[RMDB]
RNA sequence: GGGAACGACUCGAGUAGAGUCGAAAAGUUGUCGCUCGUUUGGGGUCGAAUAGCCCGAAUCGGCUGGCAACGGCGAUGAUCGCGGGCGCCAGCGUCAGAGACGCCAACAUCACCGUGACCAAACCGACGAGAGUUUACAUUUCGAUGUAAACUCUCGAAAAGAAACAACAACAACAAC
Reactivity to 2A3 in 0.01 (KOAc 150mM, MgCl2 10mM, bicine 150mM(pH8.5), 24C), signal-to-noise 6, nucleotides 027 to 126: g010u010u020g040u030c010g000c030u030c050g060u050u110u070g090g000g000g020u110c070g090a110a160u180a130g050c000c000c000g010a030a060u050c020g050g020c020u010g010g010c030a050a010c010g020g020c010g040a140u260g080a110u220c010g000c030g050g000g020c010g000c000c000a020g020c010g030u030c020a010g030a020g020a090c000g020c020c010a020a010c000a030u110c030a020c030c030g040u060g040a030c050c000a070a060a020c030c050g060a030
Reactivity to DMS in 0.01 (KOAc 150mM, MgCl2 10mM, bicine 150mM(pH8.5), 24C), signal-to-noise 4, nucleotides 027 to 126: g000u000u000g010u000c020g020c020u000c020g010u010u000u010g000g000g010g010u020c140g010a070a080u040a160g000c010c010c010g020a020a040u010c150g000g000c010u000g030g020c030a070a300c010g000g020c010g000a220u000g000a090u020c030g020c010g010g000g020c300g010c020c040a000g000c020g000u010c080a110g010a060g000a100c040g020c050c010a000a050c020a070u010c110a030c030c020g050u000g000a100c030c020a020a060a120c090c050g020a270